Chemical mapping of a 207-nucleotide RNA with DMS and 2A3.
As a SHAPE reagent, 2A3 marks flexible, mostly unpaired nucleotides at the ribose 2'-OH.
RNA sequence: GGGAACGACUCGAGUAGAGUCGAAAAGAGUUCUUAUUCGGAAUAGUGAGUUCAACCUGUGCGGUCACUGUCGAGUUGGUAGGUGCAUUGCUCCCCUCAAUCGUCGCACCGGGAACACGUUCGAAUGUCUUGACGUAUGAUGGCUGUGGCGGCACUGCUGAGAUAACAGGUUCGCCUGUUAUCUCAGAAAAGAAACAACAACAACAAC
Reactivity to DMS in 0.01 (KOAc 150mM, MgCl2 10mM, bicine 150mM(pH8.5), 24C), signal-to-noise 1, nucleotides 027 to 156: g000a180g010u000u000c030u000u000a090u000u000c050g020g000a050a070u010a110g030u000g000a170g000u000u020c060a050a040c070c040u000g030u000g040c000g030g070u010c040a020c070u000g030u000c020g000a160g000u000u020g020g070u010a080g020g020u000g020c010a240u000u000g030c020u000c030c020c010c030u010c030a040a130u010c020g030u010c020g010c030a050c000c010g030g020g000a030a030c000a000c000g030u000u010c110g000a000a090u000g000u010c030u000u000g000a060c050g020u000a080u000g010a180u000g020g030c020u000g020u000g020g000c050g010g010c010a030c030u020g000
Reactivity to 2A3 in 0.01 (KOAc 150mM, MgCl2 10mM, bicine 150mM(pH8.5), 24C), signal-to-noise 3, nucleotides 027 to 156: g080a000g020u080u000c030u130u080a190u050u170c110g060g040a060a060u070a110g110u060g080a050g030u020u120c070a110a100c010c020u020g000u010g000c030g050g020u020c010a020c030u030g020u000c070g060a100g050u030u030g150g000u080a080g000g010u060g010c020a100u040u230g080c050u290c000c000c010c020u020c010a020a130u090c030g150u050c050g000c040a030c040c000g000g030g030a020a020c050a030c050g070u100u110c070g060a070a040u090g100u090c040u090u090g010a030c040g000u020a010u230g100a080u120g030g010c030u020g000u000g000g000c100g000g000c010a000c050u040g040

Conditions: 150 mM KOAc, 10 mM MgCl2 and 150 mM bicine (pH 8.5), 24 C. For DMS, 3,339 sequencing reads were counted. The 2A3 profile rests on 980 reads.